[RMDB]
RNA sequence: GGGAACGACUCGAGUAGAGUCGAAAAGAUAUGGACACGAACUACGAGACAACAGCGAAGAACUCGGAAACGAGGGAGCUGCUAAUCUCGCGUGUCCUAAGUCAAAAGGCGCGGUUCGCCGCGCCAACGUAUUUACCUCCUUCGGGAGGUAAAUACGAAAAGAAACAACAACAACAAC
Reactivity to 2A3 in 0.01 (KOAc 150mM, MgCl2 10mM, bicine 150mM(pH8.5), 24C), signal-to-noise 2, nucleotides 027 to 126: g040a010u040a030u090g000g000a000c020a000c030g090a210a120c190u260a050c300g010a000g020a020c050a130a000c000a170g040c020g200a300a010g040a100a100c000u000c000g030g000a080a070a000c000g000a010g040g000g030a040g010c000u010g020c010u120a100a200u030c010u010c030g050c020g010u000g000u000c000c000u000a010a010g030u020c010a030a000a040a220g000g000c010g000c010g000g070u040u120c240g020c080c000g000c000g000c000c000a000a000
Reactivity to DMS in 0.01 (KOAc 150mM, MgCl2 10mM, bicine 150mM(pH8.5), 24C), signal-to-noise 2, nucleotides 027 to 126: g010a010u000a300u000g010g010a010c010a000c010g000a150a160c130u010a300c000g010a030g070a060c100a140a150c000a010g000c000g020a090a130g010a110a170c000u010c020g010g000a100a060a140c010g000a020g000g000g020a080g000c000u000g010c030u020a100a250u000c010u010c030g000c000g000u000g020u000c000c010u000a000a110g000u010c040a100a020a130a110g000g030c010g000c000g000g040u000u000c250g010c010c010g020c030g030c000c000a000a000

Chemical mapping of a 177-nucleotide RNA with 2A3 and DMS. 2A3 adducts were read by reverse transcription with SuperScript II with manganese.